This 177-nucleotide RNA was probed chemically with 2A3 and DMS.
Reactivities are given for positions 27 through 126.
The 2A3 profile rests on 1,335 reads.
The data come from the RNA Mapping Database (RMDB), library OK2TST.
[RMDB]
RNA sequence: GGGAACGACUCGAGUAGAGUCGAAAAUUGGACCAAUUCUACAGGGACUUGCAAAUCCUUGGCAGCAACAUAAAGCUCGUCCUCACGUAAGUUUUGAAUGCGGCGAAUUUCCUGAUUCAUCAUACGCUCCGUGAAAGUAUUUCGAUACUUUCACGGAAAAAGAAACAACAACAACAAC
Reactivity to 2A3 in 0.01 (KOAc 150mM, MgCl2 10mM, bicine 150mM(pH8.5), 24C), signal-to-noise 2, nucleotides 027 to 126: u070u020g080g000a040c000c000a000a050u060u060c030u050a040c020a010g030g000g010a030c020u040u080g000c040a060a050a110u010c030c000u030u030g060g000c060a030g020c000a000a080c010a110u130a090a110a020g020c010u010c020g030u010c000c020u000c010a070c030g060u010a010a170g000u000u050u110u180g110a050a010u130g060c050g000g000c040g040a050a070u020u010u040c000c000u030g030a130u120u130c060a060u050c020a100u190a200c100g060c130
Reactivity to DMS in 0.01 (KOAc 150mM, MgCl2 10mM, bicine 150mM(pH8.5), 24C), signal-to-noise 3, nucleotides 027 to 126: u010u010g020g010a230c040c020a090a060u020u030c050u000a080c040a090g000g020g020a020c010u000u000g030c060a070a130a150u000c070c050u000u000g000g000c060a060g000c080a050a070c090a070u020a080a100a110g000c030u000c060g000u000c040c030u000c100a090c120g000u000a070a090g000u000u000u000u000g000a070a050u000g010c080g000g030c040g000a060a060u010u010u000c030c020u010g000a090u000u000c050a070u000c060a070u010a050c230g000c170